[RMDB]
RNA sequence: GGGAACGACUCGAGUAGAGUCGAAAACCGAAAGAUCUUUGUUGAUGGCGUGCCAUUUGUAGUAUCUUGUGGUUAUCACUACAAAGAAUUAGGUUUAGUCAUGAAUAUGGAUGUUAGUCUCCAUAGAAACGAGCUUUCUUCGGAAAGCUCAAAAGAAACAACAACAACAAC
Reactivity to DMS in 0.01 (KOAc 150mM, MgCl2 10mM, bicine 150mM(pH8.5), 24C), signal-to-noise 5, nucleotides 027 to 129: c020c010g040a120a130a070g060a100u020c040u050u080u000g030u000u000g060a130u020g000g040c110g060u050g040c020c010a100u030u050u010g040u000a150g030u050a060u060c060u020u080g010u020g000g060u000u000a060u030c130a040c060u000a000c020a010a010a010g000a100a040u000u000a070g050g010u050u020u040a070g000u020c000a050u050g030a090a110u030a010u030g020g030a020u070g020u030u090a080g020u060c100u000c000c040a030u030a000g000a030a040a030c190
Reactivity to 2A3 in 0.01 (KOAc 150mM, MgCl2 10mM, bicine 150mM(pH8.5), 24C), signal-to-noise 5, nucleotides 027 to 129: c000c000g020a030a040a000g110a040u010c020u050u010u020g010u020u010g080a300u030g000g000c050g100u070g000c010c000a010u020u030u160g050u030a140g000u010a060u110c040u000u130g040u030g020g030u050u060a040u090c060a020c040u040a000c000a000a000a000g010a020a030u090u090a050g010g000u010u010u120a060g030u070c050a090u140g050a050a040u040a010u050g000g020a040u070g040u080u090a080g030u030c010u000c020c000a000u020a040g060a030a050a030c070
This 170-nucleotide RNA was probed chemically with DMS and 2A3. The DMS profile rests on 13,730 reads. It was measured as part of the RMDB library 15KLIB. The RNA was probed in 150 mM KOAc, 10 mM MgCl2 and 150 mM bicine (pH 8.5) at 24 C.